Structure probing data (2A3 and DMS) for a 207-nucleotide construct. For 2A3 the reverse transcriptase was SuperScript II with manganese. Source: RMDB library OK3TST, as collected in RNAgym. The reactions ran in a buffer of 150 mM KOAc, 10 mM MgCl2 and 150 mM bicine (pH 8.5), at 24 C.
[RMDB]
RNA sequence: GGGAACGACUCGAGUAGAGUCGAAAACACUAUCAACCGCAUAAUACAAUGCGGUGUUUCCUUUGUCAUCAAAUUGUGAAUCAUCCAUUCCACUGAAUAGCAAAAUCUUUACUAUUUUGGUAUCUUCUAAUGUGGCUGCCUGAUGUAAUGGAAAUUCAUCUAUGGUAUGCUUCGGCAUACCAUAGAUAAAAGAAACAACAACAACAAC
Reactivity to 2A3 in 0.01 (KOAc 150mM, MgCl2 10mM, bicine 150mM(pH8.5), 24C), signal-to-noise 5, nucleotides 027 to 156: c060a020c060u160a060u190c040a050a070c000c000g000c020a010u060a100a050u200a250c140a130a030u020g000c010g020g000u000g000u050u040u000c010c000u090u070u100g140u110c080a110u010c040a070a090a180u150u110g040u050g080a050a030u080c030a060u030c050c020a020u110u000c050c000a010c030u030g010a050a020u040a080g060c010a020a030a040a080u040c030u090u200u130a100c030u030a060u050u040u020u040g030g010u030a020u020c040u080u020c020u130a120a130u200g000u020g030g000c020u040g000c010c010u040g030a080u050g050u060a040a030u010g010g040a030a040a030u090u070c010
Reactivity to DMS in 0.01 (KOAc 150mM, MgCl2 10mM, bicine 150mM(pH8.5), 24C), signal-to-noise 3, nucleotides 027 to 156: c090a110c090u010a210u010c050a110a050c000c000g000c000a040u000a100a190u010a220c190a100a100u030g020c000g020g010u000g000u000u000u000c020c020u010u000u010g010u000c080a100u000c090a070a090a110u000u000g030u020g000a080a090u000c050a140u010c050c030a110u000u000c010c060a090c030u010g000a020a030u000a030g010c010a030a070a110a110u010c130u030u010u000a060c050u000a040u000u010u000u010g020g000u000a080u000c040u000u010c060u020a090a110u020g010u000g010g010c100u000g030c010c060u000g010a070u010g000u000a060a070u000g010g010a060a060a130u020u000c030